[RMDB]
RNA sequence: GGGAACGACUCGAGUAGAGUCGAAAAAUUUCGCUUUGUCACCGCACAGUGACCCAGCCGGAUUCUAACCUUGACUUGACCACACGAGGUGAUUGUCUGACGAUUGAGCGAUGAGCCGACUCCUAGCCCAGUAUGACAGGUUCGCCUGUCAUACUGGAAAAGAAACAACAACAACAAC
Reactivity to 2A3 in 0.01 (KOAc 150mM, MgCl2 10mM, bicine 150mM(pH8.5), 24C), signal-to-noise 7, nucleotides 027 to 126: a000u100u130u060c050g000c020u070u060u060g040u020c010a000c070c010g070c070a020c050a060g030u010g030a060c010c000c020a010g000c020c020g030g020a040u060u020c030u080a070a100c020c000u040u060g080a110c020u060u080g050a050c050c020a060c000a020c090g060a070g010g030u050g040a110u020u130g030u020c040u060g060a080c030g050a090u040u130g040a040g050c020g050a050u080g030a020g020c010c010g020a050c020u010c000c010u040a070g020c000
Reactivity to DMS in 0.01 (KOAc 150mM, MgCl2 10mM, bicine 150mM(pH8.5), 24C), signal-to-noise 3, nucleotides 027 to 126: a050u030u000u000c060g010c050u010u000u010g000u020c010a040c040c060g020c120a070c140a150g020u000g000a070c080c110c090a060g000c050c060g000g000a070u000u010c100u050a030a070c020c000u010u000g020a070c110u000u000g000a130c080c040a040c130a060c010g010a030g010g010u010g010a120u020u000g020u020c050u010g000a110c070g020a100u000u010g010a090g010c060g010a040u010g000a080g030c000c030g010a110c070u010c020c000u030a060g010c140
Source: RMDB library OK1LIB, as collected in RNAgym. Structure probing data (2A3 and DMS) for a 177-nucleotide construct. The DMS profile rests on 4,587 reads. Conditions: 150 mM KOAc, 10 mM MgCl2 and 150 mM bicine (pH 8.5), 24 C.